The record gives the reactivity of an RNA of 177 nucleotides to 2A3 and DMS.
[RMDB]
RNA sequence: GGGAACGACUCGAGUAGAGUCGAAAAAAAAACGAUGAUCCAGUUGUAGCGGUGAUUAUCGUAGCUAUCAGCAGGAUCAUCAAUCGGUGGCGACACCGAACGAUAACCGCAGACAUGCUGAAAAAAAGUUAUGAAUAACCUUCGGGUUAUUCAUAACAAAAGAAACAACAACAACAAC
Reactivity to 2A3 in 0.01 (KOAc 150mM, MgCl2 10mM, bicine 150mM(pH8.5), 24C), signal-to-noise 3, nucleotides 027 to 126: a010a000a000a000a000c070g000a000u000g000a000u010c010c000a010g020u020u010g010u020a010g010c030g040g100u130g110a220u100u290a160u270c050g020u030a040g020c000u020a020u210c000a010g000c020a000g000g000a010u010c010a000u000c000a000a030u010c000g000g010u000g000g020c010g000a010c010a000c010c000g000a020a010c000g010a010u060a100a060c020c040g000c020a010g040a110c050a090u090g020c050u110g090a150a010a000a010a030a030a010
Reactivity to DMS in 0.01 (KOAc 150mM, MgCl2 10mM, bicine 150mM(pH8.5), 24C), signal-to-noise 3, nucleotides 027 to 126: a030a040a040a020a090c140g000a010u010g000a010u010c000c010a100g030u000u010g000u000a050g010c000g010g030u000g000a180u000u000a080u000c060g010u000a210g000c030u010a020u020c010a000g010c000a040g010g020a030u000c020a000u000c010a040a090u010c000g000g020u000g020g000c300g010a240c010a000c000c010g010a030a060c250g000a090u010a050a080c040c030g000c040a050g010a140c190a050u000g020c040u020g000a010a000a030a060a110a070a080
The DMS profile rests on 2,360 reads.